[RMDB]
This 177-nucleotide RNA was probed chemically with 2A3 and DMS. 2A3 adducts were read by reverse transcription with SuperScript II with manganese. The data come from the RNA Mapping Database (RMDB), library OK2TRN. For 2A3, 869 sequencing reads were counted. Reactivities are given for positions 27 through 126.
RNA sequence: GGGAACGACUCGAGUAGAGUCGAAAAGUUGUCAAAGAUGGGAAAGGGUUUUCACUUGACACGAGCCAGUGUGAGGGCACACGUUCUAUGAUGACCUGUGACGUCUCUGUCGUGAAUAUGAGACCCCGUCCACCUUGAGGUUCGCCUCAAGGUGGACAAAAGAAACAACAACAACAAC
Reactivity to 2A3 in 0.01 (KOAc 150mM, MgCl2 10mM, bicine 150mM(pH8.5), 24C), signal-to-noise 1, nucleotides 027 to 126: g010u010u030g060u030c080a130a050a030g070a190u110g030g000g140a030a130a120g030g000g000u000u000u000u060c050a030c040u030u090g000a010c020a040c110g040a000g210c150c020a040g030u070g020u020g160a120g040g070g000c000a000c000a000c070g020u110u020c070u060a190u230g170a140u140g000a010c000c010u000g020u020g050a020c000g190u040c000u000c000u020g000u020c010g000u000g000a060a010u100a050u070g000a030g000a010c030c000c000c020
Reactivity to DMS in 0.01 (KOAc 150mM, MgCl2 10mM, bicine 150mM(pH8.5), 24C), signal-to-noise 1, nucleotides 027 to 126: g020u010u000g010u000c060a010a100a060g020a120u000g020g000g020a080a140a080g000g000g000u000u000u000u000c000a020c080u000u000g010a300c090a020c090g000a080g010c180c020a110g020u010g000u000g020a110g000g000g000c010a010c000a020c090g020u000u000c060u000a120u000g020a110u010g000a020c010c060u000g000u000g000a020c070g010u010c000u000c010u000g010u000c030g020u020g010a040a120u000a070u020g030a030g000a060c030c000c010c080